[RMDB]
RNA sequence: GGGAACGACUCGAGUAGAGUCGAAAAUAGUUGUUUUAGUGCUUGGAAUUGCAUUGUUAUUGUCGAAUGUCUUUGUUUAUUAUCGUGACUUAGCUCAAGUCUGGGAAGUACUAUUACAAGCAGGUAUGUAUGCCACUCCAAUCAUUUAUCCGAUCAAAUUAGUAAAUAUAUUCGUAUAUUUACUAAUAAAAGAAACAACAACAACAAC
Reactivity to DMS in 0.01 (KOAc 150mM, MgCl2 10mM, bicine 150mM(pH8.5), 24C), signal-to-noise 1, nucleotides 027 to 156: u000a130g000u000u000g020u000u010u000u030a060g030u010g020c050u000u000g000g040a040a100u000u000g000c040a140u000u000g040u000u000a060u010u030g040u010c040g000a110a070u010g020u000c040u010u030u000g000u000u000u000a060u010u010a100u010c040g000u010g030a060c020u000u000a110g010c060u000c100a010a130g010u000c050u010g000g000g020a090a120g000u000a060c010u000a080u000u000a050c060a100a110g000c130a050g010g020u010a060u000g020u000a070u000g010c010c020a130c010u000c040c010a050a090u010c040a060u000u010u000a080u020c020c040g030a200u000c050a070a050
Reactivity to 2A3 in 0.01 (KOAc 150mM, MgCl2 10mM, bicine 150mM(pH8.5), 24C), signal-to-noise 1, nucleotides 027 to 156: u250a050g010u000u060g000u000u030u020u050a030g000u020g000c000u010u040g000g010a000a010u030u030g020c060a030u010u010g020u020u110a070u010u090g020u050c040g070a060a010u060g060u000c000u010u090u010g160u150u110u040a060u050u090a050u050c040g030u020g010a060c040u030u040a060g040c020u020c140a000a130g040u010c010u000g010g000g010a050a050g040u010a010c010u070a050u020u050a030c030a000a000g070c020a000g030g000u120a100u150g070u000a020u120g000c010c000a010c010u030c010c000a030a000u010c020a020u090u080u160a070u150c090c220g200a000u300c000a190a000